[RMDB]
RNA sequence: GGGAACGACUCGAGUAGAGUCGAAAACGUGAGCUACCUCUCGGGAGAGCUGGCGGCCUACGAUGUGGAGCACGCCUACAGGCUCGAGCAACGGAUCGACGGUAUGCGAGACUCCCUGAGGAAACGGCCCUGUCCUUUUAUUCGUAAAAGGACAGGGAAAAGAAACAACAACAACAAC
Reactivity to 2A3 in 0.01 (KOAc 150mM, MgCl2 10mM, bicine 150mM(pH8.5), 24C), signal-to-noise 2, nucleotides 027 to 126: c010g050u070g100a030g070c070u110a100c010c000u060c010u070c120g000g000g020a040g010a050g050c000u030g100g010c010g050g020c000c000u070a060c010g040a030u060g080u040g300g020a040g000c010a030c160g020c000c010u110a180c120a160g020g000c040u080c180g020a060g010c010a000a020c000g030g040a030u000c010g010a030c040g030g000u060a170u300g030c020g000a010g020a020c000u000c000c000c010u000g010a020g000g000a080a000a030c020g010g000
Reactivity to DMS in 0.01 (KOAc 150mM, MgCl2 10mM, bicine 150mM(pH8.5), 24C), signal-to-noise 3, nucleotides 027 to 126: c060g010u010g010a120g030c070u010a100c040c020u000c000u000c300g020g010g010a070g000a180g000c060u000g010g040c000g010g000c000c010u010a300c030g000a050u020g010u000g000g010a200g000c010a150c060g010c020c020u010a090c240a110g000g020c050u000c120g000a090g000c040a060a180c070g010g010a050u000c000g010a110c260g000g010u010a030u010g010c000g000a060g000a160c020u000c010c000c000u000g010a070g000g000a050a070a040c070g000g010
An RNA of 177 nucleotides, treated with 2A3 and DMS and read out base by base. Conditions: 150 mM KOAc, 10 mM MgCl2 and 150 mM bicine (pH 8.5), 24 C. For 2A3, 3,748 sequencing reads were counted. For DMS, 2,097 sequencing reads were counted.